Structure probing data (2A3) for a 177-nucleotide construct. Reactivities are given for positions 27 through 126. The 2A3 profile rests on 518 reads. The RNA was probed in 150 mM KOAc, 10 mM MgCl2 and 150 mM bicine (pH 8.5) at 24 C. It was measured as part of the RMDB library OK1LIB.
RNA sequence: GGGAACGACUCGAGUAGAGUCGAAAAGAUGGCAAUGGUCUGCUUCUACAGGUACGGAUGCAGUGCCGUAUUUUAGAAUGUUUAAUCCAAUAAGACAGAGUGAACGCUUUGAUGCUAAAGCUUUGUACCGUAUCGCGUGUUUCGACACGCGAUACGGAAAAGAAACAACAACAACAAC
Reactivity to 2A3 in 0.01 (KOAc 150mM, MgCl2 10mM, bicine 150mM(pH8.5), 24C), signal-to-noise 1, nucleotides 027 to 126: g170a030u120g000g110c030a050a070u030g010g000u000c000u010g000c000u030u000c000u050a110c100a050g030g060u080a050c030g110g000a060u110g300c180a060g100u130g180c000c000g000u000a100u010u010u010u000a110g000a030a050u040g030u180u080u000a020a020u100c010c070a030a080u100a020a070g100a000c000a000g000a060g000u000g000a110a050c010g000c000u230u120u070g170a160u300g050c000u100a180a000a000g000c000u020u000u000g040u070a130